This 177-nucleotide RNA was probed chemically with DMS and 2A3. The data come from the RNA Mapping Database (RMDB), library TTRDEL. For 2A3, 2,387 sequencing reads were counted. For DMS the reverse transcriptase was MarathonRT. Reactivities are given for positions 27 through 126. Conditions: 150 mM KOAc, 10 mM MgCl2 and 150 mM bicine (pH 8.5), 24 C.

RNA sequence: GGGAACGACUCGAGUAGAGUCGAAAAGAUAUGGAUCUAGGGAGCUGACACUCGGAAACGAGUGGUAGCAUCGAUCUAGGAUCCUAAGUCAAACAAUCAGUAUAGGCUUCGGCCUAUACUGAUUGAAGUCUUGUACCCAGUUCGCUGGGUACAAGACAAAAGAAACAACAACAACAAC
Reactivity to DMS in 0.01 (KOAc 150mM, MgCl2 10mM, bicine 150mM(pH8.5), 24C), signal-to-noise 1, nucleotides 027 to 126: g020a020u000a280u000g000g000a010u000c000u010a020g000g000g000a010g050c000u010g010a090c000a000c010u000c000g000g010a090a030a200c000g000a000g020u000g000g010u000a010g000c000a260u000c140g000a040u020c000u000a040g000g000a010u000c000c000u000a050a070g000u000c040a060a130a300c000a000a000u000c000a010g000u000a020u000a000g000g000c020u000u000c240g000g020c000c000u000a000u000a000c000u000g000a000u000u000g010a030a050
Reactivity to 2A3 in 0.01 (KOAc 150mM, MgCl2 10mM, bicine 150mM(pH8.5), 24C), signal-to-noise 1, nucleotides 027 to 126: g010a020u090a020u210g010g000a000u020c010u010a030g000g050g000a020g030c020u030g050a030c000a000c020u010c010g020g020a130a090a040c020g000a000g040u010g000g030u010a010g000c000a110u300c000g000a030u010c020u040a040g250g040a030u000c000c000u030a130a030g070u060c020a090a050a120c010a030a020u000c020a000g000u000a010u000a000g010g040c050u120u110c300g050g000c010c000u010a000u000a010c000u010g000a000u000u010g000a000a000